[RMDB]
RNA sequence: GGGAACGACUCGAGUAGAGUCGAAAACAUUAAAUGCGGGAUCUUGGCACCGUCGAUUUCCAUGUUUUUAGCAGUCGCGUAGUACGACGCUGCGUUCGUCAUCAUCUCAUGGAUAAUCUCACCGAACGGACGUUGCCCUAAACCUAACUGAGCGUAACGACAAACUACUAUUCGUAGUAGUUUGUCGAAAAGAAACAACAACAACAAC
Reactivity to DMS in 0.01 (KOAc 150mM, MgCl2 10mM, bicine 150mM(pH8.5), 24C), signal-to-noise 3, nucleotides 027 to 156: c040a130u010u010a020a090a080u000g030c020g030g040g000a080u000c090u000u000g020g030c000a200c030c010g000u010c090g010a150u000u010u010c040c020a060u010g010u000u010u020u010u010a080g010c020a100g020u000c030g050c020g030u010a130g030u000a100c000g010a050c020g020c020u000g000c030g000u000u010c050g000u010c070a060u010c060a040u000c050u000c080a060u010g010g010a050u010a030a050u000c050u000c050a210c130c020g000a090a110c040g030g000a040c040g020u000u000g010c040c020c040u000a030a060a060c040c030u000a060a120c080u000g010a120g030c070g010u000a070a220
Reactivity to 2A3 in 0.01 (KOAc 150mM, MgCl2 10mM, bicine 150mM(pH8.5), 24C), signal-to-noise 7, nucleotides 027 to 156: c030a030u130u170a060a060a050u120g050c050g010g010g030a060u050c060u120u130g030g000c030a020c020c010g020u020c040g010a010u000u000u000c010c000a010u000g030u000u050u000u020u090a050g010c060a040g030u150c050g000c020g010u070a040g010u050a080c110g060a070c090g100c010u010g000c010g000u040u130c040g050u040c030a110u020c010a030u020c060u010c040a000u010g010g000a020u060a220a050u030c060u040c070a110c060c080g090a120a070c040g030g010a000c010g020u030u030g000c000c000c000u070a100a090a040c000c010u020a050a070c040u070g060a040g050c050g050u080a070a050

This 207-nucleotide RNA was probed chemically with DMS and 2A3. The reactions ran in a buffer of 150 mM KOAc, 10 mM MgCl2 and 150 mM bicine (pH 8.5), at 24 C. Reactivities are given for positions 27 through 156. It was measured as part of the RMDB library OK3TST.